[RMDB]
RNA sequence: GGGAACGACUCGAGUAGAGUCGAAAAGGCGGAUGGGCAGCUUGAGGACGAAGAAGUUGAACCGCAGCCUCGUCGUGACUGCGCCCAAUGCUGCUGUCAGGACAAAGGUUUCGAUGAAAGGCUUGCCUGCCUUCUGACUCUUCGGAGUCAGAAGGCAAAAAGAAACAACAACAACAAC
Reactivity to DMS in 0.01 (KOAc 150mM, MgCl2 10mM, bicine 150mM(pH8.5), 24C), signal-to-noise 1, nucleotides 027 to 126: g010g050c020g000g010a120u000g000g000g020c050a040g030c010u010u000g080a080g030g020a110c070g000a040a050g010a060a080g040u000u000g000a100a070c060c090g000c030a070g010c010c030u000c300g010u000c030g000u000g000a060c030u000g010c100g020c000c050c120a040a110u010g000c020u000g030c000u000g000u010c010a040g020g010a040c040a030a220a130g020g010u000u000u020c020g000a100u000g020a120a070a120g000g020c020u000u030g000c050c090
Source information: An RNA of 177 nucleotides, treated with DMS and read out base by base. For DMS, 853 sequencing reads were counted. It was measured as part of the RMDB library OK2TRN. The RNA was probed in 150 mM KOAc, 10 mM MgCl2 and 150 mM bicine (pH 8.5) at 24 C.